The data come from the RNA Mapping Database (RMDB), library RFMREP. Structure probing data (DMS and 2A3) for a 177-nucleotide construct. The DMS profile rests on 4,613 reads. Values cover nucleotides 27 to 126. For 2A3, 8,051 sequencing reads were counted.
RNA sequence: GGGAACGACUCGAGUAGAGUCGAAAAUCCCAGACUUCGGUCUGGGAAAAAUGAGAUGAAAUUAGCGUUUGGAUAUGCGAUUUUACGUUGAUUUCAUCUCAUGAAAAGCCAGUUGUUCGCAACUGGCCCGUAAAAUAGACUUCGGUCUAUUUUACGGAAAAGAAACAACAACAACAAC
Reactivity to DMS in 0.01 (KOAc 150mM, MgCl2 10mM, bicine 150mM(pH8.5), 24C), signal-to-noise 3, nucleotides 027 to 126: u000c000c000c000a010g010a010c000u000u020c240g030g000u000c000u000g020g000g000a000a010a030a090a010u000g000a000g010a010u000g000a010a010a010u000u000a000g000c000g010u000u000u000g010g010a140u000a070u010g010c230g000a120u000u010u010u000a010c000g020u000u000g000a010u000u000u000c000a000u000c000u000c000a000u000g010a050a080a100a170g000c000c000a010g010u000u000g000u000u010c210g010c020a010a010c000u000g000g000c010
Reactivity to 2A3 in 0.01 (KOAc 150mM, MgCl2 10mM, bicine 150mM(pH8.5), 24C), signal-to-noise 5, nucleotides 027 to 126: u000c000c000c000a000g010a010c020u060u090c290g120g000u000c000u010g000g000g000a120a020a000a000a010u010g000a000g010a000u000g010a000a000a000u000u010a010g000c010g020u040u070u150g160g040a130u110a080u300g210c140g050a090u070u090u080u110a010c010g010u000u010g010a000u000u000u000c000a000u000c000u000c000a000u000g000a010a080a010a000g010c000c000a000g000u000u010g020u030u090c180g000c100a000a000c000u000g000g000c010